[RMDB]
RNA sequence: GGGAACGACUCGAGUAGAGUCGAAAAAUGGCGAAUGCAUGGGGAACUACAUCUGUGUCGCGAGUUUGAUUCUCGCCAGGGCCUGGUCCUGUAGCUCAGUUGGUAGAGCAAGCUGUUCCCCGGACACAAAAUCCAGCUAGGUUCGCCUAGCUGGAAAGUAGGACUAAUUCUUCGGAAUUAGUCCUACAAAAGAAACAACAACAACAAC
Reactivity to 2A3 in 0.01 (KOAc 150mM, MgCl2 10mM, bicine 150mM(pH8.5), 24C), signal-to-noise 3, nucleotides 027 to 156: a000u070g060g020c060g140a130a030u120g020c060a070u140g000g020g000g010a000a020c000u070a040c080a100u080c020u020g080u050g130u180c030g010c010g020a000g000u040u100u130g080a070u140u040c000u000c000g020c000c010a000g010g030g030c020c250u130g030g040u010c000c000u000g040u080a030g020c010u000c020a060g020u050u160g150g050u100a030g020a020g040c030a030a020g040c020u050g000u010u030c010c000c000c000g000g010a020c010a000c010a020a110a000a040u030c000c000a000g050c000u010a020g010g000u010u000c050g040c080c010u000a000g000c000u000g000g000a010a000a000
Reactivity to DMS in 0.01 (KOAc 150mM, MgCl2 10mM, bicine 150mM(pH8.5), 24C), signal-to-noise 2, nucleotides 027 to 156: a060u000g010g020c010g000a110a030u020g020c030a070u000g010g000g010g050a050a120c010u040a050c050a060u000c030u000g030u000g000u000c070g000c010g020a040g020u000u010u000g010a300u000u000c000u000c020g030c020c020a200g010g000g010c020c060u000g030g010u000c000c040u010g020u000a070g000c010u000c010a120g000u000u010g020g010u000a100g000a140g030c020a070a060g020c010u010g020u000u010c000c000c010c030g020g020a150c050a120c060a030a060a120a170u000c000c000a010g010c030u000a020g050g010u000u030c300g050c000c000u000a000g010c000u000g010g000a020a000a040
An RNA of 207 nucleotides, treated with 2A3 and DMS and read out base by base. For 2A3, 1,681 sequencing reads were counted. It was measured as part of the RMDB library M2RFPK. For 2A3 the reverse transcriptase was SuperScript II with manganese. The RNA was probed in 150 mM KOAc, 10 mM MgCl2 and 150 mM bicine (pH 8.5) at 24 C. Reactivities are given for positions 27 through 156.